[RMDB]
An RNA of 177 nucleotides, treated with DMS and read out base by base.
RNA sequence: GGGAACGACUCGAGUAGAGUCGAAAAGAUAUGGAGCUUAGUACUAGUGACAGAAGUUCGAGGAUCUGUAAGUGUCGGAAACGACACACAGGGAGAAUUAUGUCACUAGUACUAAGCUCCUAAGUCACUAUUGAUUAGGGUUCGCCCUAAUCAAUAGAAAAGAAACAACAACAACAAC
Reactivity to DMS in 0.01 (KOAc 150mM, MgCl2 10mM, bicine 150mM(pH8.5), 24C), signal-to-noise 4, nucleotides 027 to 126: g020a040u000a300u000g010g000a010g020c000u010u000a010g010u000a000c000u010a000g000u000g020a020c000a000g000a130a190g010u000u000c010g010a090g030g010a030u010c000u000g000u000a100a090g040u000g000u000c000g000g010a130a090a280c020g000a020c000a000c000a030c000a000g010g010g000a030g010a040a000u000u000a270u000g000u000c000a000c000u000a000g010u010a000c000u000a000a000g000c010u000c000c010u000a020a040g020u000c050a290
Annotation: Conditions: 150 mM KOAc, 10 mM MgCl2 and 150 mM bicine (pH 8.5), 24 C.